Background:
The record gives the reactivity of an RNA of 177 nucleotides to 2A3 and DMS. It was measured as part of the RMDB library M2PK90. Reactivities are given for positions 27 through 126.

RNA sequence: GGGAACGACUCGAGUAGAGUCGAAAAUAACAUUCUCUAUUUCGACUAGGCAAAUUUUGAGAGGCCCGAACCCGCUGCAAUAUUGAGCGUACGAUGGAUGGAUGACCCGGGUGGGCAGCGCGGAUAACUAUUAGACAUGAUUCGUCAUGUCUAAUAGAAAAGAAACAACAACAACAAC
Reactivity to 2A3 in 0.01 (KOAc 150mM, MgCl2 10mM, bicine 150mM(pH8.5), 24C), signal-to-noise 5, nucleotides 027 to 126: u110a030a020c020a080u160u040c030u000c000u050a080u010u070u060c040g030a040c040u040a030g050g060c040a070a140a180u090u180u180u170g090a120g010a040g070g020c040c010c000g030a050a040c010c000c000g010c020u030g020c030a020a110u060a100u240u210g030a050g030c020g020u040a020c050g040a040u070g020g040a020u040g070g030a050u060g040a050c010c040c020g030g020g040u080g010g050g000c000a010g010c030g000c020g010g010a020u050a110a050
Reactivity to DMS in 0.01 (KOAc 150mM, MgCl2 10mM, bicine 150mM(pH8.5), 24C), signal-to-noise 7, nucleotides 027 to 126: u010a110a140c120a120u000u010c030u000c020u000a080u000u010u000c020g010a080c100u000a080g010g000c060a060a070a100u000u010u000u010g010a090g010a180g010g010c020c020c050g010a070a120c070c020c010g010c050u000g000c040a060a080u010a100u000u000g010a080g010c050g000u000a040c100g000a080u000g010g000a050u000g010g010a070u010g000a100c060c020c020g010g010g030u010g000g000g020c030a020g020c040g020c100g000g000a090u010a040a170